[RMDB]
RNA sequence: GGGAACGACUCGAGUAGAGUCGAAAACGGAUGAGGAUAGGGAGGAGGAGUAUGAUACGAGCAUGUAUCAUUUCAGUGAGCACGUACCUCCAGCGCGGGAGAGCAAGAGCUUGAGUGAAGCUCAUAGCGCCCCCCUGUGAUUCGUCACAGGGGGGCGAAAAGAAACAACAACAACAAC
Reactivity to 2A3 in 0.01 (KOAc 150mM, MgCl2 10mM, bicine 150mM(pH8.5), 24C), signal-to-noise 2, nucleotides 027 to 126: c070g020g030a110u150g000a000g020g080a080u030a000g030g000g000a070g010g010a010g000g000a000g070u060a000u040g000a010u060a040c000g000a070g120c140a130u150g000u050a030u000c000a000u030u210u100c070a060g020u050g090a010g000c000a000c050g040u060a070c000c040u020c010c040a010g000c030g000c000g040g030g000a090g010a010g100c000a000a000g030a010g050c010u040u060g060a070g060u110g090a050a020g010c000u000c020a010u090a000g020
Reactivity to DMS in 0.01 (KOAc 150mM, MgCl2 10mM, bicine 150mM(pH8.5), 24C), signal-to-noise 1, nucleotides 027 to 126: c160g020g000a130u040g000a130g040g000a090u120a190g000g000g020a270g020g000a100g000g010a050g000u070a010u000g000a000u000a010c000g060a190g030c140a030u000g010u000a000u000c000a000u000u000u000c040a150g000u000g100a020g020c070a000c180g000u000a110c040c000u000c060c050a080g000c170g000c100g020g020g000a110g000a130g040c220a030a110g000a050g090c030u000u020g000a100g050u000g030a100a020g040c000u000c040a100u020a080g000

Source: RMDB library RFM100, as collected in RNAgym. An RNA of 177 nucleotides, treated with 2A3 and DMS and read out base by base. For DMS, 983 sequencing reads were counted. The RNA was probed in 150 mM KOAc, 10 mM MgCl2 and 150 mM bicine (pH 8.5) at 24 C.